RNA sequence: GGGAACGACUCGAGUAGAGUCGAAAACCCAAAAGAAAGCAAGUAAUGUUAGAGCAAUAAUUCUAGUAUCCGAAUUAGUCUUAUCCCUUGGCUCGCUCUAACGUUAUUACUCCCUAAUACUCCCUUUACACACACUUGGUUUCGACCAAGUGUGUGUAAAAGAAACAACAACAACAAC
Reactivity to 2A3 in 0.01 (KOAc 150mM, MgCl2 10mM, bicine 150mM(pH8.5), 24C), signal-to-noise 2, nucleotides 027 to 126: c000c000c030a000a010a000a020g130a050a040a000g100c180a090a000g000u020a030a000u020g010u030u030a000g000a000g030c020a090a210u130a190a010u050u010c030u070a060g090u090a200u090c060c060g030a000a030u020u010a010g010u000c030u020u150a190u170c030c030c020u020u020g030g000c000u010c090g000c000u000c000u000a000a000c000g000u000u010a000u000u000a000c030u060c000c000c000u020a030a030u070a100c030u060c030c000c000u010u000u000
This 177-nucleotide RNA was probed chemically with 2A3.
Reactivities are given for positions 27 through 126.
The reactions ran in a buffer of 150 mM KOAc, 10 mM MgCl2 and 150 mM bicine (pH 8.5), at 24 C.
For 2A3, 1,029 sequencing reads were counted.